[RMDB]
An RNA of 177 nucleotides, treated with DMS and 2A3 and read out base by base. Conditions: 150 mM KOAc, 10 mM MgCl2 and 150 mM bicine (pH 8.5), 24 C. For 2A3 the reverse transcriptase was SuperScript II with manganese.
RNA sequence: GGGAACGACUCGAGUAGAGUCGAAAAUAGCGCUACGCGAUUAUACGUACGAUCGGCCGCGUAAUCGCGAUAUAUAUGCAUCGGCUAUACGUAUAGCUAGCCGUAAUCGUACGCGUAGCUAAUCGCGGCUAGUGUAAGCAUUCGUGCUUACACUAGCAAAAGAAACAACAACAACAAC
Reactivity to DMS in 0.01 (KOAc 150mM, MgCl2 10mM, bicine 150mM(pH8.5), 24C), signal-to-noise 5, nucleotides 027 to 126: u020a070g010c100g000c100u000a200c020g000c000g000a040u000u000a060u000a260c050g000u000a020c000g010a040u000c020g000g000c030c040g000c020g010u000a080a100u010c070g000c010g010a050u000a080u010a120u010a060u010g010c120a050u000c080g000g000c040u000a050u000a050c290g020u010a080u000a040g030c070u010a090g010c000c010g000u020a040a030u000c020g010u000a010c020g000c020g010u000a040g000c300u010a010a020u000c010g000c030g010
Reactivity to 2A3 in 0.01 (KOAc 150mM, MgCl2 10mM, bicine 150mM(pH8.5), 24C), signal-to-noise 4, nucleotides 027 to 126: u140a020g100c060g030c140u090a020c020g000c010g000a000u020u040a070u050a090c020g000u000a010c020g000a020u060c010g020g000c020c000g010c040g050u070a070a130u190c070g000c010g070a000u040a000u000a000u010a030u170g110c060a050u050c050g090g000c030u030a030u020a070c100g170u230a050u030a190g020c060u050a020g000c000c000g020u040a050a060u020c010g000u010a000c000g000c010g010u010a010g000c010u000a000a010u020c020g000c000g070